[RMDB]
RNA sequence: GGGAACGACUCGAGUAGAGUCGAAAACUUCUCCUUUCCCGACGUAUCAAAGAGAAUAUCAAGGAUGGUGUCAGGAGCAGUGCCUCAGUUCAGAAAGCUGCCUGAGAUAGGACUGAAGCCAGGGAAGCAAUACCCAUAAGUUCGCUUAUGGGUAUUGAAAAGAAACAACAACAACAAC
Reactivity to 2A3 in 0.01 (KOAc 150mM, MgCl2 10mM, bicine 150mM(pH8.5), 24C), signal-to-noise 7, nucleotides 027 to 126: c010u050u020c020u050c010c000u030u100u030c000c000c010g020a050c030g040u070a030u140c060a070a130a040g090a020g040a120a110u090a030u220c050a070a030g140g000a040u050g020g090u080g020u050c030a020g000g030a020g020c050a040g030u060g110c000c000u020c020a030g010u060u050c010a020g120a110a170a050g060c040u050g030c010c020u060g000a050g010a060u130a040g020g020a010c010u030g020a040a010g010c010c020a020g000g020g000a030a000g040
Reactivity to DMS in 0.01 (KOAc 150mM, MgCl2 10mM, bicine 150mM(pH8.5), 24C), signal-to-noise 9, nucleotides 027 to 126: c140u000u000c020u010c010c080u000u000u000c010c000c020g020a100c130g010u000a050u000c060a070a110a180g000a050g010a140a080u010a070u000c040a080a250g010g010a040u000g010g020u010g020u000c030a040g010g010a050g010c130a060g010u010g010c030c020u000c030a030g010u000u000c030a090g010a100a110a130g000c050u000g010c240c020u000g000a070g010a140u010a080g010g000a050c030u000g000a060a050g010c030c040a080g010g000g010a060a070g010